The record gives the reactivity of an RNA of 177 nucleotides to DMS and 2A3. The data come from the RNA Mapping Database (RMDB), library OK1LIB. The RNA was probed in 150 mM KOAc, 10 mM MgCl2 and 150 mM bicine (pH 8.5) at 24 C.
RNA sequence: GGGAACGACUCGAGUAGAGUCGAAAAGAUGAGCAGGCUGAUAAUCUUGUGCAGUAUGCAUGCUCGUAACUCCAGCGCACAAGUGGACGCACAAGAUUUGAAUCCAGCAUAGCGCAGGAGCCGCAGACACCUCACGACGAUUCGUCGUCGUGAGGUGAAAAGAAACAACAACAACAAC
Reactivity to DMS in 0.01 (KOAc 150mM, MgCl2 10mM, bicine 150mM(pH8.5), 24C), signal-to-noise 1, nucleotides 027 to 126: g000a090u010g000a020g020c000a020g000g040c020u000g010a240u140a030a240u000c000u000u000g000u000g060c030a160g000u100a070u060g100c010a290u000g000c000u050c020g090u020a090a200c060u060c020c030a120g040c030g000c050a040c210a260a180g000u010g020g030a010c000g000c000a000c020a040a000g000a120u010u070u030g000a200a060u020c120c000a050g000c150a060u020a200g000c020g000c030a030g070g000a040g010c150c000g050c070a100g020a050
Reactivity to 2A3 in 0.01 (KOAc 150mM, MgCl2 10mM, bicine 150mM(pH8.5), 24C), signal-to-noise 2, nucleotides 027 to 126: g180a070u110g000a000g040c030a000g020g020c000u030g020a090u070a150a000u020c010u010u000g000u000g030c020a060g060u090a040u080g120c060a000u020g000c010u020c040g000u040a080a050c000u000c000c000a020g040c000g080c000a040c070a270a200g090u100g040g090a060c120g000c000a020c000a020a000g010a020u070u000u050g110a110a020u030c000c000a000g000c000a160u020a050g000c000g020c000a000g000g170a040g020c000c100g110c000a020g030a100
Overview
The 2A3 profile rests on 1,186 reads.